[RMDB]
RNA sequence: GGGAACGACUCGAGUAGAGUCGAAAACGCGCAGGUAUGGAUACGAAUUCGCGCUUAUUGUCUGCCAUAGACUGAUACAUAGUUACGACAAUGUUCGAGCGUGAGUUGUCAUAUCUAUGGCAGCGCGGCAGUGGUAACAAUUCGUUGUUACCACUGCAAAAGAAACAACAACAACAAC
Reactivity to DMS in 0.01 (KOAc 150mM, MgCl2 10mM, bicine 150mM(pH8.5), 24C), signal-to-noise 5, nucleotides 027 to 126: c090g010c030g040c060a110g020g000u000a030u010g000g000a120u010a040c110g000a100a140u000u010c030g010c040g010c020u010u000a080u000u010g010u000c020u010g010c060c050a030u000a030g010a020c300u000g000a070u010a040c070a090u000a080g000u000u000a120c080g020a040c020a050a110u010g000u010u000c080g010a050g010c010g020u000g000a060g010u010u010g010u010c020a030u000a170u000c020u010a020u000g010g010c010a040g000c030g010c100g000
Reactivity to 2A3 in 0.01 (KOAc 150mM, MgCl2 10mM, bicine 150mM(pH8.5), 24C), signal-to-noise 5, nucleotides 027 to 126: c040g000c020g000c020a050g120g150u160a060u180g090g070a060u050a160c070g080a050a090u070u060c040g000c010g000c000u000u100a150u080u130g050u000c010u010g010c030c010a020u030a040g030a010c010u010g020a010u020a140c030a010u120a050g070u060u080a110c040g000a010c050a230a260u220g050u130u110c050g010a010g000c010g020u060g050a100g070u100u070g050u030c000a000u030a040u010c010u010a000u000g030g010c000a010g000c040g000c030g040
Conditions: 150 mM KOAc, 10 mM MgCl2 and 150 mM bicine (pH 8.5), 24 C. Structure probing data (DMS and 2A3) for a 177-nucleotide construct. Reactivities are given for positions 27 through 126.